[RMDB]
RNA sequence: GGGAACGACUCGAGUAGAGUCGAAAAACGUGCGAAAGCACGAUGGUUGUCGUAGGAUAUGUAGGAUAUUCCUACAUGAGGAUCACCCAUGUUCGCAUGGAAGAAGGACAGAAGGACGAUAACCACACCCUGCCGUCAUAUUCGUAUGACGGCAGGGAAAAGAAACAACAACAACAAC
Reactivity to 2A3 in 0.01 (KOAc 150mM, MgCl2 10mM, bicine 150mM(pH8.5), 24C), signal-to-noise 3, nucleotides 027 to 126: a000c010g010u020g000c020g080a110a010a020g010c010a000c010g000a010u000g000g000u020u000g010u020c000g020u000a020g070g050a070u020a020u170g000u000a000g000g020a070u050a150u300u200c000c020u000a000c000a000u020g010a060g090g040a070u040c010a040c010c000c000a010u010g040u030u050c230g000c150a010u040g010g000a040a090g040a090a060g180g010a010c020a050g090a090a030g120g010a000c000g000a000u000a010a010c000c000a000c020a020
Reactivity to DMS in 0.01 (KOAc 150mM, MgCl2 10mM, bicine 150mM(pH8.5), 24C), signal-to-noise 2, nucleotides 027 to 126: a150c030g020u000g010c000g000a120a090a210g020c000a000c020g000a070u000g020g020u000u010g010u000c010g040u000a040g010g010a120u020a010u000g010u000a060g000g010a260u000a220u010u000c000c000u000a010c000a020u000g000a090g010g020a110u000c030a180c110c010c000a110u000g010u000u040c130g040c000a010u000g000g000a080a020g000a120a060g000g000a050c060a080g010a090a130g010g000a010c000g010a010u000a000a020c000c020a030c220a140
This 177-nucleotide RNA was probed chemically with 2A3 and DMS. The DMS profile rests on 1,413 reads. It was measured as part of the RMDB library OK2TRN.